Chemical mapping of a 207-nucleotide RNA with 2A3.
2A3 adducts were read by reverse transcription with SuperScript II with manganese.
It was measured as part of the RMDB library OK3TST.

RNA sequence: GGGAACGACUCGAGUAGAGUCGAAAAUAACAGCAUGGUGGUGCAGGAUAUGGAAGGCAUAUUUAGAGUCAGUAUAAUUAUUGACACGUAAUUCCUUUGCAAGAGUGAGGGCUCAAGUUAAGGCAAUGAGUUCAGCUUGCUGAGAGGUAGUGGAGCAGAGGUGACGAUGAUUCGUCAUCGUCACCUCAAAAGAAACAACAACAACAAC
Reactivity to 2A3 in 0.01 (KOAc 150mM, MgCl2 10mM, bicine 150mM(pH8.5), 24C), signal-to-noise 2, nucleotides 027 to 156: u090a050a030c050a040g000c020a040u070g010g040u040g010g050u030g060c010a020g000g000a010u030a040u060g070g020a020a090g010g000c100a020u060a070u130u120u000a130g010a000g000u070c050a010g050u050a050u070a160a130u230u170a050u080u000g020a010c000a000c100g010u020a030a030u070u110c000c020u040u010u070g020c010a000a000g010a010g050u140g110a020g040g000g000c030u010c030a000a040g020u110u120a030a020g110g080c030a070a120u050g000a020g010u040u010c050a010g060c020u030u090g020c010u020g110a000g000a000g120g000u010a000g010u010g010g010a060g050c110a040